Annotation:
This 177-nucleotide RNA was probed chemically with DMS. Reactivities are rounded to 0.1 and cut off at 0 and 3.
RNA sequence: GGGAACGACUCGAGUAGAGUCGAAAACUCCACCCUCCCAACACACUCCUUCCCCCCUGCGGGGCUCCCCCAUAAGAUGGCAGGAACCCACUCAUUGGGGUCCGCUGUUCCAUUCUUUCUUACCUUGCCAAUAGCUUAUCUUCGGAUAAGCUAUUGGAAAAGAAACAACAACAACAAC
Reactivity to DMS in 0.01 (KOAc 150mM, MgCl2 10mM, bicine 150mM(pH8.5), 24C), signal-to-noise 1, nucleotides 027 to 126: c140u010c020c040a250c030c010c010u020c000c030c010a120a110c140a120c110a100c030u000c030c040u010u000c030c000c000c030c030c090u010g000c110g000g010g000g000c030u010c020c000c020c020c050a130u000a050a050g010a020u000g000g000c010a090g030g000a020a020c010c010c010a040c240u000c110a150u020u000g010g020g000g000u000c010c010g000c070u000g000u020u000c040c020a030u000u000c030u000u000u000c070u010u000a050c090c030u000u000g000